[RMDB]
RNA sequence: GGGAACGACUCGAGUAGAGUCGAAAAGAUAUGGAUCUGCUACCCACCGAACUACGGUUAAGGUUCGGAAACGAACCGGAGCCGCGAGGCAGAUCCUAAGUCAAAGUGGUAGGUUCGCCUACCACAACCCCUUUUGACAGUUCGCUGUCAAAAGGGGAAAAGAAACAACAACAACAAC
Reactivity to 2A3 in 0.01 (KOAc 150mM, MgCl2 10mM, bicine 150mM(pH8.5), 24C), signal-to-noise 1, nucleotides 027 to 126: g080a020u150a130u280g000g000a010u000c000u030g000c000u040a220c050c030c060a010c000c080g050a070a110c090u150a050c190g030g030u010u050a050a010g000g000u000u000c000g000g000a080a020a010c020g020a000a010c020c010g000g000a030g000c050c020g090c020g020a040g000g030c000a000g000a000u000c000c000u040a100a030g080u090c120a140a040a080g000u000g000g000u000a030g050g000u000u110c300g130c030c000u020a000c030c000a020c000a000a000
Reactivity to DMS in 0.01 (KOAc 150mM, MgCl2 10mM, bicine 150mM(pH8.5), 24C), signal-to-noise 1, nucleotides 027 to 126: g010a020u010a200u000g000g000a000u000c000u000g000c000u000a260c110c090c040a300c100c050g000a070a050c050u010a170c030g000g020u000u000a170a280g000g000u030u000c000g000g000a020a070a030c030g020a030a010c030c000g000g010a180g000c000c000g000c070g010a050g000g010c000a000g000a000u000c000c000u000a010a050g000u000c140a020a040a070g030u010g000g020u000a020g010g020u000u010c210g020c000c000u010a000c000c030a010c000a040a020
Notes: This 177-nucleotide RNA was probed chemically with 2A3 and DMS. For DMS, 787 sequencing reads were counted. The data come from the RNA Mapping Database (RMDB), library TTRDEL.